[RMDB]
RNA sequence: GGGAACGACUCGAGUAGAGUCGAAAAGAUAUGGAGUUACGGGAGGGUCCGUUCCCAUCGAUCGUACUUUCAUCGGAAACGAUGAAAGUACGGGAGGGAACGACCCGAAGAACGUAACUCCUAAGUCCUAAAUAUAACUCUUCGGAGUUAUAUUUAGAAAAGAAACAACAACAACAAC
Reactivity to DMS in 0.01 (KOAc 150mM, MgCl2 10mM, bicine 150mM(pH8.5), 24C), signal-to-noise 4, nucleotides 027 to 126: g010a090u000a300u000g010g000a010g000u000u000a010c000g000g000g000a150g010g010g000u010c100c120g010u000u000c000c010c010a300u000c190g000a060u010c000g000u000a000c000u000u000u000c000a010u010c000g010g010a130a120a260c010g010a000u000g000a000a020a020g010u000a000c000g000g000g010a030g010g000g000a020a010c010g000a010c010c000c000g000a040a060g000a160a160c010g000u000a010a000c000u000c000c000u000a020a080g000u010c020
Reactivity to 2A3 in 0.01 (KOAc 150mM, MgCl2 10mM, bicine 150mM(pH8.5), 24C), signal-to-noise 2, nucleotides 027 to 126: g080a030u130a090u300g030g010a000g000u000u010a000c000g020g040g010a020g060g000g000u170c300c100g010u030u010c000c000c010a060u300c030g030a050u020c010g000u000a000c010u000u020u000c010a010u000c000g010g070a130a050a060c010g020a000u000g000a000a000a000g010u000a000c000g000g000g000a010g000g000g000a000a000c000g020a010c000c000c010g000a030a000g000a020a000c000g010u010a010a000c000u020c000c000u000a040a010g000u010c000